Source: RMDB library M2PK90, as collected in RNAgym. An RNA of 177 nucleotides, treated with 2A3 and DMS and read out base by base. Reactivities are given for positions 27 through 126. For DMS, 12,341 sequencing reads were counted. DMS adducts were read by reverse transcription with MarathonRT.

[RMDB]
RNA sequence: GGGAACGACUCGAGUAGAGUCGAAAAGAAGAGAGCGUAGCACACACUCAGACUGUACGACAGUCUGACACACACCUACGCAAGUGCAUCGUGUGUGUGAUAUCGAUGUUGCACGAAGAUGAGGAAACAGCAUAUAGAGGUUCGCCUCUAUAUGCUGAAAAGAAACAACAACAACAAC
Reactivity to 2A3 in 0.01 (KOAc 150mM, MgCl2 10mM, bicine 150mM(pH8.5), 24C), signal-to-noise 7, nucleotides 027 to 126: g130a060a010g100a000g020a000g010c030g000u020a010g020c070a020c010a000c000a010c050u010c010a000g000a010c000u010g020u140a140c130g140a050c260a000g000u000c000u000g010a000c000a000c000a000c000a000c010c020u070a010c030g020c050a030a030g070u050g020c020a030u050c050g020u030g010u020g000u010g010u020g100a050u040a030u190c030g010a040u080g030u100u090g020c030a010c050g020a030a020g090a090u170g030a040g030g120a060a080a030
Reactivity to DMS in 0.01 (KOAc 150mM, MgCl2 10mM, bicine 150mM(pH8.5), 24C), signal-to-noise 9, nucleotides 027 to 126: g010a120a090g010a110g010a100g010c010g010u000a050g010c050a040c050a070c060a110c180u000c000a010g000a020c000u000g010u000a130c280g010a140c010a010g020u000c000u000g010a020c070a050c110a070c110a060c160c030u000a030c040g010c040a090a080g010u010g010c040a040u000c060g010u000g010u010g010u010g000u000g010a090u010a070u010c080g000a060u000g020u000u000g020c020a050c040g000a080a090g010a080u010g000a100g010g010a100a080a170